Structure probing data (DMS) for a 177-nucleotide construct. Source: RMDB library OK2TST, as collected in RNAgym. The RNA was probed in 150 mM KOAc, 10 mM MgCl2 and 150 mM bicine (pH 8.5) at 24 C. For DMS, 540 sequencing reads were counted.
RNA sequence: GGGAACGACUCGAGUAGAGUCGAAAAGGAGGAACGACGAAACGUGACCGGGUGAGGAGGCCGGCGACAGCGACACACUUGCAUCGGAUGCAGCCCGGUUAACGUGCCGGCACGGCCUGGGUAACCACUCGUGGAGUCUGUUCGCAGACUCCACGAGAAAAGAAACAACAACAACAAC
Reactivity to DMS in 0.01 (KOAc 150mM, MgCl2 10mM, bicine 150mM(pH8.5), 24C), signal-to-noise 1, nucleotides 027 to 126: g010g020a030g000g020a080a060c070g000a110c030g010a090a180a070c000g010u000g020a060c030c010g020g000g010u000g000a160g010g030a180g000g000c000c020g000g030c020g000a070c190a060g000c080g000a030c300a190c140a010c150u000u000g020c030a010u000c090g000g030a300u000g030c070a290g030c030c050c000g020g020u000u000a030a080c030g030u010g020c060c040g000g030c050a030c000g000g010c000c040u000g000g000g000u000a130a060c070c030a210